[RMDB]
RNA sequence: GGGAACGACUCGAGUAGAGUCGAAAAGCGCAGUUCGCUGCGCAGAAGAUCCUAAGUCGGUCCCUUGGACCGUAACGCUGGCUUGGACCUGUCGGAAACGACAGCUAGCCAGGUUACGCUAGGGACCGAUAUGGAGACAAAAGUGGUUCGCCACUAAAGAGUACGAUGCAUUCGUGCAUCGUACUCUAAAAGAAACAACAACAACAAC
Reactivity to 2A3 in 0.01 (KOAc 150mM, MgCl2 10mM, bicine 150mM(pH8.5), 24C), signal-to-noise 1, nucleotides 027 to 156: g040c020g000c020a010g040u060u070c160g020c140u020g000c000g000c000a000g000a050a100g020a080u010c030c000u090a180a060g040u000c000g000g000u000c030c030c020u050u100g130g000a130c240c060g000u000a020a000c030g040c300u000g000g040c000u020u030g060g100a300c050c040u010g020u000c000g000g110a110a040a010c000g000a000c000a000g040c000u000a000g000c000c000a000g000g000u020u000a000c000g000c050u000a000g000g000g000a000c000c000g000a000u000a000u000g000g000a020g010a050c100a040a190a040a030g020u020g080g000u020u100c170g040c060c020a030c000u170a180a290
Chemical mapping of a 207-nucleotide RNA with 2A3. The data come from the RNA Mapping Database (RMDB), library RNAMAK. Conditions: 150 mM KOAc, 10 mM MgCl2 and 150 mM bicine (pH 8.5), 24 C.